RNA sequence: GGGAACGACUCGAGUAGAGUCGAAAACAAUGUGGAAGAUGCUUGAGAACUGUUUGAAUUGAAUUUCAUUCAAGGCUGGUAUCUUUCAGUUUUGAAAGGUAGAAGUGCGUAUUGGUAAGUUACUAGAAAUAAAGGGUGAAUUUCUUCAACUUGAUAGAUAAGACACACCGUUCGCGGUGUGUCUUAUAAAAGAAACAACAACAACAAC
Reactivity to 2A3 in 0.01 (KOAc 150mM, MgCl2 10mM, bicine 150mM(pH8.5), 24C), signal-to-noise 1, nucleotides 027 to 156: c030a050a250u160g020u110g030g000a010a010g000a000u000g000c040u090u060g030a050g020a130a100c020u010g020u000u020u000g070a030a040u030u050g040a180a190u100u030u120c040a020u020u020c000a010a060g040g060c020u010g000g000u000a000u050c000u050u100u010c010a010g020u070u000u130u110g050a090a040a020g020g000u070a060g000a180a040g010u020g050c040g010u050a070u040u130g050g000u050a030a030g000u050u000a050c020u020a010g080a060a100a070u130a080a140a000g030g000g000u020g000a010a010u080u070u000c010u050u070c000a040a040c020u000u080g030a020u060a160g120